[RMDB]
RNA sequence: GGGAACGACUCGAGUAGAGUCGAAAAUGUUCAACCUGUGGCAAAUUUGUACUUUCUCCCUGAAUUAUGUUGUUAUCAAAGAAAAAAAUUGGGAAGCAUGGCAAAAUAUCAUCAAAACUGAAACUAGCUACUAUAAAGUCUUCGGACUUUAUAGUAGAAAAGAAACAACAACAACAAC
Reactivity to DMS in 0.01 (KOAc 150mM, MgCl2 10mM, bicine 150mM(pH8.5), 24C), signal-to-noise 2, nucleotides 027 to 126: u010g010u010u010c070a080a120c040c010u000g040u010g010g010c070a040a060a150u020u000u000g010u010a040c060u000u000u000c050u000c040c010c010u020g020a140a130u010u000a050u040g000u010u000g010u000u020a120u000c040a070a110a150g010a000a000a030a160a120a100a140u000u000g000g010g020a050a010g030c080a040u010g000g020c060a020a050a040a070u000a060u000c080a040u010c070a010a040a100a070c230u010g000a080a030a070c120u000a090g010
Structure probing data (DMS) for a 177-nucleotide construct.
The reactions ran in a buffer of 150 mM KOAc, 10 mM MgCl2 and 150 mM bicine (pH 8.5), at 24 C.
Reactivities are given for positions 27 through 126.
The data come from the RNA Mapping Database (RMDB), library RFMREP.